[RMDB]
RNA sequence: GGGAACGACUCGAGUAGAGUCGAAAAGAUAUGGAUCUCACGAGCCUUGGAUUUACUACUUUCUGUUCACUAGUUCGGAAACGAACUAGUGAACGAAAGUAGUUGUCAGGCUCGGAGAUCCUAAGUCGUAAAACUAUAACUUCGGUUAUAGUUUUACAAAAGAAACAACAACAACAAC
Reactivity to DMS in 0.01 (KOAc 150mM, MgCl2 10mM, bicine 150mM(pH8.5), 24C), signal-to-noise 2, nucleotides 027 to 126: g010a130u010a300u010g000g000a010u000c000u000c000a150c030g010a020g010c000c020u000u020g040g020a040u010u010u000a010c010u000a010c000u010u000u000c000u020g040u000u000c000a010c010u000a010g000u000u000c000g000g010a130a120a280c000g010a010a000c000u000a000g010u000g000a000a000c000g000a000a000a020g020u000a000g000u000u000g000u000c020a030g000g010c000u000c000g000g010a010g010a010u010c000c000u000a010a090g000u010c140
Reactivity to 2A3 in 0.01 (KOAc 150mM, MgCl2 10mM, bicine 150mM(pH8.5), 24C), signal-to-noise 5, nucleotides 027 to 126: g080a020u160a070u270g000g010a000u000c000u000c050a300c250g000a010g030c020c030u200u300g220g010a100u300u300u280a030c010u010a000c000u050u010u020c120u300g010u000u010c000a000c010u010a000g010u000u000c010g040g060a120a130a090c010g000a010a000c000u000a000g010u000g000a000a000c000g010a000a000a000g000u000a000g000u000u000g010u010c000a000g020g010c000u000c000g000g000a000g010a000u000c000c000u000a010a010g090u050c080